[RMDB]
RNA sequence: GGGAACGACUCGAGUAGAGUCGAAAACAGUCUGCAUGGCCUGGAAUGCUAUUGCACCUUCCGCACCUCUAAUCUCACCGACGAUAAUGUAGUUUGGCCUCGACCUUAAGGCUGCUUUUAGCAAGUCGUGUAGUACCUACUUCGGUAGGUACUACACAAAAGAAACAACAACAACAAC
Reactivity to 2A3 in 0.01 (KOAc 150mM, MgCl2 10mM, bicine 150mM(pH8.5), 24C), signal-to-noise 4, nucleotides 027 to 126: c000a000g080u030c020u030g000c020a040u070g040g000c010c010u040g020g080a100a040u100g030c010u060a090u070u120g000c020a050c010c010u040u030c040c010g010c030a050c010c010u010c020u060a080a070u040c010u030c010a050c040c000g070a050c010g040a070u040a170a070u210g050u070a050g010u040u040u120g010g000c000c000u020c020g090a110c010c000u070u120a100a070g030g010c010u020g020c010u070u160u040u080a040g030c080a120a010g010u050c030
Reactivity to DMS in 0.01 (KOAc 150mM, MgCl2 10mM, bicine 150mM(pH8.5), 24C), signal-to-noise 3, nucleotides 027 to 126: c100a040g010u000c040u000g000c050a030u010g020g000c030c040u010g020g000a130a130u010g020c010u000a070u000u000g020c020a070c050c040u000u000c040c050g020c130a100c030c040u000c070u010a100a090u010c080u000c030a080c050c020g000a070c060g010a100u000a090a080u000g020u000a090g000u000u000u000g020g000c030c020u000c050g000a090c070c100u000u010a110a060g010g010c020u000g010c050u000u000u000u000a070g030c060a060a120g010u010c080
About this RNA:
The record gives the reactivity of an RNA of 177 nucleotides to 2A3 and DMS. The DMS profile rests on 3,330 reads. The RNA was probed in 150 mM KOAc, 10 mM MgCl2 and 150 mM bicine (pH 8.5) at 24 C.